This 177-nucleotide RNA was probed chemically with 2A3. It was measured as part of the RMDB library OK1LIB. For 2A3, 734 sequencing reads were counted.
RNA sequence: GGGAACGACUCGAGUAGAGUCGAAAAGGAGGAUCUCCGCUCGAUGCUCGGUGCCUUUCGAUUCAUCAACAGAAUUGCCUCGGAUUCGGUCUUUGAUGAUCUUAUGGUCUCACGGGACAACGACCUCAGUACCUGGCUGCUUCGGCAGCCAGGUACUAAAAGAAACAACAACAACAAC
Reactivity to 2A3 in 0.01 (KOAc 150mM, MgCl2 10mM, bicine 150mM(pH8.5), 24C), signal-to-noise 2, nucleotides 027 to 126: g070g040a060g000g080a100u050c070u000c050c000g100c020u040c030g030a060u080g020c020u020c010g000g160u080g000c010c000u080u090u090c020g020a060u090u000c010a090u000c030a000a050c020a100g080a050a030u130u080g110c000c040u160c020g130g030a110u170u000c040g070g060u040c100u060u040u030g020a080u010g010a030u030c000u000u170a060u110g000g000u010c010u000c100a070c050g030g010g120a070c030a100a010c030g070a130c020c010u080c020